[RMDB]
RNA sequence: GGGAACGACUCGAGUAGAGUCGAAAAAGUGGGUAAAAGGACAGGAAGAUCCCUGGGAAGGGGAGGGAGCCCAGACCUUACAGCCUUCCCUAUCCUCUCCUAGAUGCCUCUGGGCCUGGAAGAAGUCUAGCAAUCAUAGUUUCGACUAUGAUUGCUAAAAAGAAACAACAACAACAAC
Reactivity to 2A3 in 0.01 (KOAc 150mM, MgCl2 10mM, bicine 150mM(pH8.5), 24C), signal-to-noise 2, nucleotides 027 to 126: a000g130u140g000g000g030u110a150a110a000a060g030g000a010c020a000g020g050a050a050g090a220u080c050c020c020u040g020g000g020a000a020g020g010g020g010a010g000g020g000a010g000c000c000c000a010g020a020c000c000u000u060a110c020a060g100c010c000u010u030c030c010c000u020a170u030c010c010u040c020u000c000c020u040a040g060a190u250g050c000c020u040c000u030g000g020g010c000c000u050g030g010a030a060g030a080a000g070u000c040
Reactivity to DMS in 0.01 (KOAc 150mM, MgCl2 10mM, bicine 150mM(pH8.5), 24C), signal-to-noise 4, nucleotides 027 to 126: a090g030u020g010g000g020u010a050a110a130a040g010g010a040c090a040g010g020a060a140g010a140u010c070c080c070u010g000g010g010a030a050g010g010g010g020a010g000g010g010a100g000c020c000c020a040g010a060c020c000u000u000a090c090a150g010c010c010u000u000c010c000c000u000a080u000c010c010u000c200u000c000c000u000a110g000a180u010g010c040c020u000c030u000g000g000g000c010c040u000g000g000a090a080g000a110a120g000u000c120